[RMDB]
RNA sequence: GGGAACGACUCGAGUAGAGUCGAAAAACACCAAAACUGAAAACGGAAGGCAAUCCUUCCACGACGAUACUUACUUUCCUUUGAUCGUCGUUACUACUGGCAUAGCCACAAAGGAGAAGAAACAUGAGCGCGGACACUGACUUCGGUCAGUGUCCAAGUAACAAAAUCAGUUCGCUGAUUUUGUUACAAAAGAAACAACAACAACAAC
Reactivity to 2A3 in 0.01 (KOAc 150mM, MgCl2 10mM, bicine 150mM(pH8.5), 24C), signal-to-noise 8, nucleotides 027 to 156: a000c080a120c030c050a090a070a030a070c150u200g090a090a070a010a040c070g010g000a010a000g030g010c160a060a180u240c010c000u010u000c000c000a000c000g000a000c000g000a000u090a140c020u090u040a030c000u050u140u060c010c000u030u020u030g030a010u010c000g000u000c000g000u030u040a030c020u030a020c020u010g020g000c070a270u110a140g020c010c020a030c050a030a040a010g050g020a030g030a100a030g030a040a120a010c070a100u210g070a050g110c130g010c090g060g000a000c000a000c000u010g000a000c000u020u040c140g020g000u000c000a000g000u000g000u000c000c000a000a000
Reactivity to DMS in 0.01 (KOAc 150mM, MgCl2 10mM, bicine 150mM(pH8.5), 24C), signal-to-noise 3, nucleotides 027 to 156: a090c050a170c020c020a120a060a120a300c110u020g000a110a050a120a060c050g020g000a070a010g060g000c090a140a160u000c030c000u000u010c000c020a120c020g030a020c000g020a030u000a030c050u000u010a070c130u000u000u010c050c020u000u000u000g010a050u000c000g000u000c010g010u000u000a050c080u010a070c020u000g000g020c000a160u010a180g010c020c040a070c090a040a140a070g070g000a020g020a100a130g000a160a070a110c020a070u000g010a120g020c060g010c090g020g010a020c000a010c010u000g000a030c000u010u020c300g050g010u010c000a030g000u010g000u000c010c000a000a050
An RNA of 207 nucleotides, treated with 2A3 and DMS and read out base by base.
It was measured as part of the RMDB library M2RFPK.
The 2A3 profile rests on 8,082 reads.
Reactivities are given for positions 27 through 156.
The reactions ran in a buffer of 150 mM KOAc, 10 mM MgCl2 and 150 mM bicine (pH 8.5), at 24 C.